[RMDB]
RNA sequence: GGGAACGACUCGAGUAGAGUCGAAAAGGGACUGGCCCGAUGAAGCCCGGCAACCUAACUUUAUUUAAGCGUAAAGUGAAGGUGCUAAUUCCAGCAAAAUGGUGUAUUCCGAUUUGGUAGAUAAGAGAAGCGUGACAUGAGUUCGCUCAUGUCACAACAAGAUAAUUUUCUUCGGAAAAUUAUCUUGAAAAGAAACAACAACAACAAC
Reactivity to 2A3 in 0.01 (KOAc 150mM, MgCl2 10mM, bicine 150mM(pH8.5), 24C), signal-to-noise 4, nucleotides 027 to 156: g020g000g000a010c010u030g020g030c000c000c030g010a060u100g040a030a060g020c000c000c000g010g010c020a080a100c000c000u010a020a010c000u030u020u030a080u090u150u170a180a060g100c080g030u010a000a030a010g010u040g090a120a030g000g010u000g000c000u000a020a050u120u060c020c010a010g040c080a070a020a000a120u100g000g040u050g030u090a100u070u050c010c010g030a090u150u060u100g040g000u060a080g040a190u110a190a070g030a020g060a170a030g100c050g070u000g000a000c000a000u000g000a000g010u040u150c230g020c060u000c000a000u010g000u000c000a000c000a000a000
Reactivity to DMS in 0.01 (KOAc 150mM, MgCl2 10mM, bicine 150mM(pH8.5), 24C), signal-to-noise 3, nucleotides 027 to 156: g000g030g020a080c000u000g000g040c050c000c030g000a110u000g010a140a190g010c020c010c090g030g010c010a040a020c000c000u000a130a010c000u010u000u000a020u000u000u010a140a260g050c260g000u010a010a030a050g000u000g000a090a050g040g020u010g000c020u010a060a170u000u000c020c030a100g010c060a040a090a110a140u010g000g030u010g010u000a150u000u000c030c010g010a140u000u010u000g010g030u000a050g010a090u010a070a120g000a130g010a090a110g020c140g020u000g000a010c010a010u010g000a030g030u000u000c300g010c010u000c000a010u000g000u000c000a000c010a030a070
Chemical mapping of a 207-nucleotide RNA with 2A3 and DMS.
The RNA was probed in 150 mM KOAc, 10 mM MgCl2 and 150 mM bicine (pH 8.5) at 24 C.
For DMS the reverse transcriptase was MarathonRT.
Reactivities are given for positions 27 through 156.
For 2A3, 2,247 sequencing reads were counted.